[RMDB]
RNA sequence: GGGAACGACUCGAGUAGAGUCGAAAACUUGAUUACACGCUCGCAUUCACGGUCACUUCCGAAGCGCUUUAGUACCUUCCGUCCCGAAACCGCCAACUGCCCGGGAGGCUUUAUACCCGCGCUUGGUUAUUCCGUUCUCUUUCGAGAGAACGGAAUAAAAAGAAACAACAACAACAAC
Reactivity to DMS in 0.01 (KOAc 150mM, MgCl2 10mM, bicine 150mM(pH8.5), 24C), signal-to-noise 2, nucleotides 027 to 126: c050u000u000g030a150u030u000a090c050a090c060g030c020u000c010g020c060a050u000u030c070a030c060g040g000u000c010a060c040u000u020c000c000g000a130a020g010c020g030c040u000u010u010a050g030u040a110c030c030u010u000c020c030g000u010c010c010c000g040a040a070a040c060c140g020c000c010a030a060c050u020g020c030c040c000g000g010g030a130g010g010c090u020u040u050a090u020a120c060c040c010g010c220g000c020u000u010g000g000u030
Reactivity to 2A3 in 0.01 (KOAc 150mM, MgCl2 10mM, bicine 150mM(pH8.5), 24C), signal-to-noise 3, nucleotides 027 to 126: c000u060u130g060a060u120u150a040c040a000c060g040c010u030c020g030c030a070u070u040c070a020c050g040g010u030c010a010c110u080u020c000c000g070a040a030g010c010g030c060u060u070u140a050g010u090a060c000c000u000u040c010c010g060u000c000c010c000g020a060a040a040c030c020g000c010c000a020a050c050u040g000c010c010c030g000g000g010a030g030g000c020u010u070u060a090u100a030c000c000c000g000c000g000c000u040u020g070g040u050